[RMDB]
Source: RMDB library OK2TST, as collected in RNAgym. Structure probing data (2A3 and DMS) for a 177-nucleotide construct. The 2A3 profile rests on 1,837 reads. The reactions ran in a buffer of 150 mM KOAc, 10 mM MgCl2 and 150 mM bicine (pH 8.5), at 24 C.
RNA sequence: GGGAACGACUCGAGUAGAGUCGAAAACUUCAUGGAGCAACCUUUUAAAUGGGAGGAGGAUAUCUGGAAUCACGACUCCUGAUACACUUGAAUUGGUAUCCGGCUGCCUAAUUACGAGGACAUCACGCCUCACCUGUAUUUUCGAAUACAGGUGAGGAAAAGAAACAACAACAACAAC
Reactivity to 2A3 in 0.01 (KOAc 150mM, MgCl2 10mM, bicine 150mM(pH8.5), 24C), signal-to-noise 2, nucleotides 027 to 126: c000u080u070c060a120u170g050g040a030g000c040a040a080c010c000u020u000u060u140a090a100a040u140g000g010g030a010g030g010a020g000g000a010u000a010u060c040u070g060g100a120a020u060c010a030c150g080a030c030u050c010c000u010g020a040u060a080c070a020c070u060u100g070a120a070u180u080g000g000u010a040u000c000c020g070g000c040u090g070c020c000u050a060a090u070u050a050c060g020a020g030g040a010c010a010u070c010a010c090g050
Reactivity to DMS in 0.01 (KOAc 150mM, MgCl2 10mM, bicine 150mM(pH8.5), 24C), signal-to-noise 2, nucleotides 027 to 126: c040u000u010c110a050u000g020g000a070g020c080a090a120c020c030u000u000u000u000a060a060a130u000g000g000g030a020g010g000a300g000g020a020u000a050u000c070u010g010g000a120a060u000c050a070c130g010a170c070u000c020c030u010g000a080u010a050c160a120c120u010u000g000a070a090u020u000g000g000u000a010u000c020c020g040g000c040u010g010c030c020u010a030a080u000u000a030c110g010a020g020g000a100c090a080u000c110a030c200g010